[RMDB]
Notes:
Structure probing data (2A3 and DMS) for a 177-nucleotide construct. 2A3 adducts were read by reverse transcription with SuperScript II with manganese. High 2A3 reactivity points to a flexible backbone, as in loops and unpaired stretches. The RNA was probed in 150 mM KOAc, 10 mM MgCl2 and 150 mM bicine (pH 8.5) at 24 C. For 2A3, 7,620 sequencing reads were counted.
RNA sequence: GGGAACGACUCGAGUAGAGUCGAAAAGAUAUGGACGAUAGUUUAAAGCAACAGCAUAUCUCGGAAACGAGAUAUGACAUGCUUGACUGAUCGUCCUAAGUCAAAGUUUGCGGUUCGCCGCAAACAACAUAACGCUGUUGUUCGCAACAGCGUUAUGAAAAGAAACAACAACAACAAC
Reactivity to 2A3 in 0.01 (KOAc 150mM, MgCl2 10mM, bicine 150mM(pH8.5), 24C), signal-to-noise 3, nucleotides 027 to 126: g050a030u070a060u170g000g000a000c020g000a020u030a010g030u080u080u300a120a090a020g020c000a020a170c080a150g060c000a010u000a000u000c000u000c000g020g050a080a050a050c020g000a000g000a000u000a010u000g030a030c020a030u080g010c000u050u040g020a000c000u150g130a050u000c000g000u010c000c000u010a050a020g000u000c010a100a000a090g010u030u000u000g020c020g010g110u040u190c300g070c070c000g000c000a000a010a000c010a020a020
Reactivity to DMS in 0.01 (KOAc 150mM, MgCl2 10mM, bicine 150mM(pH8.5), 24C), signal-to-noise 5, nucleotides 027 to 126: g000a090u000a300u000g000g030a010c000g010a030u000a020g010u000u000u010a120a030a020g020c000a040a130c270a210g030c010a000u000a010u000c000u000c000g010g010a110a080a230c010g010a010g010a010u000a010u000g010a020c090a190u010g020c010u000u000g000a010c020u000g020a030u000c000g020u000c000c000u000a010a110g020u000c060a130a080a130g000u000u010u000g000c000g000g010u000u010c300g030c010c000g000c000a000a010a000c010a130a230